[RMDB]
RNA sequence: GGGAACGACUCGAGUAGAGUCGAAAAGGGAGGUAGGCGGGACGACUACCUAGGACUGCAAGCAAAUCUCUUGGGUGGCAGGGCCCCCUGUGUGCUGUAGCAGAACUACAACCUCUCCCGCCGUUAGAUAUUAGCGCAGUUUCGACUGCGCUAAUAUAAAAGAAACAACAACAACAAC
Reactivity to DMS in 0.01 (KOAc 150mM, MgCl2 10mM, bicine 150mM(pH8.5), 24C), signal-to-noise 4, nucleotides 027 to 126: g010g000g010a050g010g010u000a110g000g010c020g010g020g030a050c220g010a030c030u000a120c270c220u010a020g010g000a220c020u000g030c010a160a060g000c020a050a070a110u000c070u000c060u010u030g010g000g030u010g020g000c020a150g030g020g010c020c010c020c020c000u000g010u010g000u000g010c080u000g000u010a120g010c020a020g010a020a260c010u000a020c040a060a190c240c240u000c020u000c000c000c000g000c020c000g000u020u000a030g000
Reactivity to 2A3 in 0.01 (KOAc 150mM, MgCl2 10mM, bicine 150mM(pH8.5), 24C), signal-to-noise 1, nucleotides 027 to 126: g000g020g030a070g030g050u150a020g110g000c040g000g000g000a010c070g040a050c010u000a030c020c020u000a000g000g030a030c000u010g010c030a030a110g030c000a000a150a300u080c040u030c010u210u060g000g000g000u210g000g070c150a190g110g300g020c010c010c010c000c000u030g040u010g010u000g000c030u030g030u040a040g000c050a000g020a000a010c010u020a010c010a040a040c000c010u000c010u000c010c010c000g070c000c000g000u010u010a040g000